RNA sequence: GGGAACGACUCGAGUAGAGUCGAAAAUCCAGUACGUUCGCGUACUGGAAAAGUCGCGGCUUGAGGGCGUGUACGGCAGCGCACACACACGACCCUGAAGCCAAAGUCCGUACUUCGGUACGGACAACAACUGAGAUUCGUUCGCGAAUCUCAGUUGAAAAGAAACAACAACAACAAC
Reactivity to DMS in 0.01 (KOAc 150mM, MgCl2 10mM, bicine 150mM(pH8.5), 24C), signal-to-noise 3, nucleotides 027 to 126: u000c000c000a010g010u000a010c000g000u000u030c170g050c000g030u010a000c010u000g000g010a000a010a040a060g000u000c080g020c180g030g010c000u000u000g010a030g020g000g000c000g000u010g010u000a090c160g000g000c080a140g010c200g000c050a110c050a140c130a040c000a010c020g000a170c010c000c000u000g000a010a010g020c010c010a030a050a060g000u000c000c000g010u000a000c000u000u020c230g010g010u000a000c000g000g020a010c000a040a110
Reactivity to 2A3 in 0.01 (KOAc 150mM, MgCl2 10mM, bicine 150mM(pH8.5), 24C), signal-to-noise 3, nucleotides 027 to 126: u020c000c000a010g010u010a000c010g000u000u040c230g000c000g080u000a000c000u020g000g000a020a030a000a000g050u040c050g010c080g130g000c010u010u030g220a010g000g000g010c000g000u000g000u010a020c050g060g030c080a170g070c090g050c070a050c000a000c010a010c010a000c120g300a300c000c000c020u040g030a000a000g000c000c020a010a010a010g000u000c000c000g020u010a000c000u030u060c200g070g000u010a010c000g000g000a010c000a000a020
Structure probing data (DMS and 2A3) for a 177-nucleotide construct.
The 2A3 profile rests on 3,245 reads.
For DMS, 2,360 sequencing reads were counted.